This 177-nucleotide RNA was probed chemically with 2A3.
[RMDB]
RNA sequence: GGGAACGACUCGAGUAGAGUCGAAAAUGGCCAUUCCACACUCCUGAAAUUUUCGGUACGUUUCAGGCUCAUCGUUCUUGAUGCGAAAUAUCUCUGCCAUACAGUCUGCGUACUCCUCUGCGGUUGCCGGUGCGUAGCAGUUCGCUGCUACGCACCGAAAAGAAACAACAACAACAAC
Reactivity to 2A3 in 0.01 (KOAc 150mM, MgCl2 10mM, bicine 150mM(pH8.5), 24C), signal-to-noise 4, nucleotides 027 to 126: u050g030g020c020c020a040u050u070c030c000a070c000a020c100u040c020c010u010g030a020a020a140u080u160u090u110c090g030g030u070a050c040g020u010u000u030c010a020g020g020c000u020c000a080u020c010g090u200u060c050u120u140g070a070u100g050c000g060a050a090a030u210a040u000c060u020c030u060g010c030c010a090u080a090c080a040g060u020c050u010g050c030g000u000a120c020u010c010c020u050c070u080g060c030g070g000u030u080g050c020

Conditions: 150 mM KOAc, 10 mM MgCl2 and 150 mM bicine (pH 8.5), 24 C. 2A3 adducts were read by reverse transcription with SuperScript II with manganese. The data come from the RNA Mapping Database (RMDB), library OK1LIB. As a SHAPE reagent, 2A3 marks flexible, mostly unpaired nucleotides at the ribose 2'-OH.